[RMDB]
RNA sequence: GGGAACGACUCGAGUAGAGUCGAAAACUUCCUUUCUUCGGGUUUCCUUCCUCUGCUUGCGGCCUCGCCCGGAGUCUUCGAAUCCAGCGCAGGUUCUGACGCGACCGGUGGCAUCACCGAGUUUGCUCAAGCCUCAAUCCGCUUUUUCUUCAACUUACUAGUGAUACUGGUUCGCCAGUAUCACUAGAAAAGAAACAACAACAACAAC
Reactivity to 2A3 in 0.01 (KOAc 150mM, MgCl2 10mM, bicine 150mM(pH8.5), 24C), signal-to-noise 2, nucleotides 027 to 156: c030u080u060c010c000u050u020u050c060u060u060c050g040g000g020u030u040u050c010c000u030u050c010c020u070c060u000g010c050u070u110g050c020g030g010c000c020u020c020g000c020c010c010g040g000a030g020u050c040u000u140c060g090a100a050u010c040c040a040g030c020g000c090a010g020g000u040u020c060u050g010a000c050g010c010g010a000c000c000g000g010u000g030g160c100a250u300c000a180c010c000g060a100g120u010u030u300g000c000u010c000a000a000g000c000c000u020c030a060a060u020c010c010g010c000u170u070u000u030u050c020u150u170c020a120a090c030u020u010a060
Chemical mapping of a 207-nucleotide RNA with 2A3. The reactions ran in a buffer of 150 mM KOAc, 10 mM MgCl2 and 150 mM bicine (pH 8.5), at 24 C. For 2A3, 1,310 sequencing reads were counted. As a SHAPE reagent, 2A3 marks flexible, mostly unpaired nucleotides at the ribose 2'-OH.